RNA sequence: GGGAACGACUCGAGUAGAGUCGAAAACGAUUUGGUGCGCAUAGCUGUGGAUGAAACCAAUUGGUGGUCUGAAAAUAUGCGCCUUCGAGUCAUCGAGUCUGCGGCUGCAGCGCGAGCUAUUGAGGGACUCAGUGGGGUGGUUCGCCACCCCACUGAGAAAAGAAACAACAACAACAAC
Reactivity to 2A3 in 0.01 (KOAc 150mM, MgCl2 10mM, bicine 150mM(pH8.5), 24C), signal-to-noise 1, nucleotides 027 to 126: c090g040a090u010u030u260g060g030u090g000c000g000c000a010u020a100g040c090u070g150u070g100g010a040u070g080a090a040a010c010c000a190a300u020u190g000g060u000g060g070u000c030u020g060a100a060a000a030u050a030u020g020c000g010c010c000u110u060c000g040a000g120u060c020a030u040c030g000a000g080u020c010u040g000c080g050g030c020u110g030c020a040g000c000g000c010g050a010g000c010u020a040u230u210g010a050g000g080g000a040
Reactivity to DMS in 0.01 (KOAc 150mM, MgCl2 10mM, bicine 150mM(pH8.5), 24C), signal-to-noise 1, nucleotides 027 to 126: c120g000a110u000u010u010g000g060u010g060c010g020c000a070u000a030g010c220u010g010u000g020g010a020u000g010a070a070a010c040c010a300a200u000u000g010g020u000g000g000u000c000u000g000a100a110a150a110u010a000u000g010c040g010c010c080u000u000c010g000a040g000u010c090a140u000c070g010a040g000u010c020u010g050c080g040g000c160u000g020c070a020g000c020g050c140g000a090g000c050u000a100u010u010g010a100g000g000g010a260